RNA sequence: GGGAACGACUCGAGUAGAGUCGAAAAUCCUUCCUUUUCGAAGGAAGGACAGUGCACAGUCUUCGCAUCUGUGAAUCACACAACAGCCGUGACUAUGCGAGGUUUUAAUCAAGUUCGCUUGAUUAAACGGAAUAAGUGAAUUCGUUCACUUAUUCCGAAAAGAAACAACAACAACAAC
Reactivity to DMS in 0.01 (KOAc 150mM, MgCl2 10mM, bicine 150mM(pH8.5), 24C), signal-to-noise 8, nucleotides 027 to 126: u000c000c000u000u000c000c010u000u000u000u020c190g010a020a010g000g000a020a010g010g000a010c090a040g010u000g000c020a010c010a010g000u000c060u000u000c040g020c020a040u000c030u000g000u000g000a120a070u000c180a230c040a050c060a090a080c140a110g010c050c030g010u010g000a120c180u000a010u000g000c010g010a020g010g000u000u000u000u000a000a010u000c000a010a010g010u000u010c210g020c000u000u000g010a010u000u000a000a010a090
Reactivity to 2A3 in 0.01 (KOAc 150mM, MgCl2 10mM, bicine 150mM(pH8.5), 24C), signal-to-noise 7, nucleotides 027 to 126: u010c000c000u010u010c010c000u050u050u040u090c250g130a010a000g000g000a010a000g000g000a010c030a030g050u060g020c010a010c000a020g010u000c050u070u020c090g010c010a030u010c010u010g020u010g060a090a110u120c040a020c010a000c000a110a210c020a080g090c030c030g090u080g080a050c070u080a030u030g010c010g010a020g010g030u030u030u010u020a000a010u000c010a000a000g020u040u070c170g070c080u000u000g010a010u000u010a020a010a010